[RMDB]
RNA sequence: GGGAACGACUCGAGUAGAGUCGAAAACCGUCGGUUGGCACUUUUCGUCCUUUCUGGCCAUUUGUGAGUCCCGAAGGAGAAGGACGUCAGGGACUCAACGACGGAAACAAAACCCUUCGGGGUUUUGCUUUUACAGAAACUUCGGUUUCUGUAAAAGAAAAGAAACAACAACAACAAC
Reactivity to DMS in 0.01 (KOAc 150mM, MgCl2 10mM, bicine 150mM(pH8.5), 24C), signal-to-noise 3, nucleotides 027 to 126: c000c000g010u000c000g020g000u000u000g020g020c030a210c200u000u020u010u000c050g000u000c000c010u000u000u010c130u010g020g020c000c000a020u000u010u010g000u000g010a040g020u000c000c010c040g020a140a150g000g010a150g010a090a070g020g020a070c060g000u010c110a200g020g000g000a020c000u010c000a000a010c000g000a000c000g000g010a080a070a150c010a010a000a010a000c000c000c000u000u010c250g030g000g000g000u000u000u010u000g010
Reactivity to 2A3 in 0.01 (KOAc 150mM, MgCl2 10mM, bicine 150mM(pH8.5), 24C), signal-to-noise 2, nucleotides 027 to 126: c010c000g010u010c000g010g030u010u000g000g030c020a040c150u170u110u170u180c070g050u000c010c020u110u250u150c120u120g070g000c000c010a020u000u020u010g000u010g010a000g000u000c030c000c010g050a160a070g110g080a110g030a130a060g040g040a020c010g000u030c030a010g000g000g010a000c000u000c010a000a010c000g010a000c000g000g000a020a010a000c000a000a010a000a000c000c000c000u000u040c230g050g000g000g000u000u000u010u010g000

Conditions: 150 mM KOAc, 10 mM MgCl2 and 150 mM bicine (pH 8.5), 24 C. Structure probing data (DMS and 2A3) for a 177-nucleotide construct. Reactivities are given for positions 27 through 126. 2A3 adducts were read by reverse transcription with SuperScript II with manganese. For 2A3, 2,827 sequencing reads were counted. Source: RMDB library RFMREP, as collected in RNAgym.